[RMDB]
RNA sequence: GGGAACGACUCGAGUAGAGUCGAAAAUCCUAAGUCUGAACGUAACUCUAAGACAGGACAGCAGAGCAGGUUCGGAAACGAACCUGCGACGAAGCUGUCUCGAGAGUUACAGUUCAGAUAUGGAAAAGAUUCUUAUUUCUUCGGAAAUAAGAAUCAACCAAUGGAAUUACUUCGGUAAUUCCAUUGGAAAAGAAACAACAACAACAAC
Reactivity to DMS in 0.01 (KOAc 150mM, MgCl2 10mM, bicine 150mM(pH8.5), 24C), signal-to-noise 1, nucleotides 027 to 156: u000c000c050u000a040a220g020u000c000u000g020a020a050c000g010u020a000a040c000u000c010u000a170a160g050a230c240a040g030g000a040c010a050g070c050a170g000a300g050c050a030g010g030u000u010c010g030g000a190a120a270c010g000a030a000c010c010u000g010c000g000a050c080g030a160a230g010c000u000g030u000c000u010c080g000a040g020a050g020u010u000a030c000a090g050u000u020c000a010g050a050u000a050u000g000g000a090a080a110a110g030a000u000u000c020u020u010a020u000u000u010c020u000u000c300g030g000a000a000a000u000a010a030g020a060a000u000c000a070a090
Reactivity to 2A3 in 0.01 (KOAc 150mM, MgCl2 10mM, bicine 150mM(pH8.5), 24C), signal-to-noise 2, nucleotides 027 to 156: u030c000c000u020a050a020g030u000c000u000g000a000a010c000g000u000a000a000c000u000c010u040a180a050g110a110c060a050g040g080a030c020a010g030c020a010g000a000g050c000a000g000g000u010u000c020g050g040a140a070a030c010g000a000a000c000c000u010g000c010g000a000c000g010a040a010g000c000u000g000u000c010u000c000g010a000g000a000g000u010u000a000c040a020g000u000u000c000a000g000a000u050a030u040g030g030a040a030a060a100g010a000u010u000c000u000u010a000u030u010u000c010u010u090c230g080g000a000a000a010u010a010a000g010a010a000u010c000a000a010
An RNA of 207 nucleotides, treated with DMS and 2A3 and read out base by base. Values are in units of 0.01, from 0 to 300, in steps of 10. 2A3 adducts were read by reverse transcription with SuperScript II with manganese. Reactivities are given for positions 27 through 156. Conditions: 150 mM KOAc, 10 mM MgCl2 and 150 mM bicine (pH 8.5), 24 C. The DMS profile rests on 1,672 reads.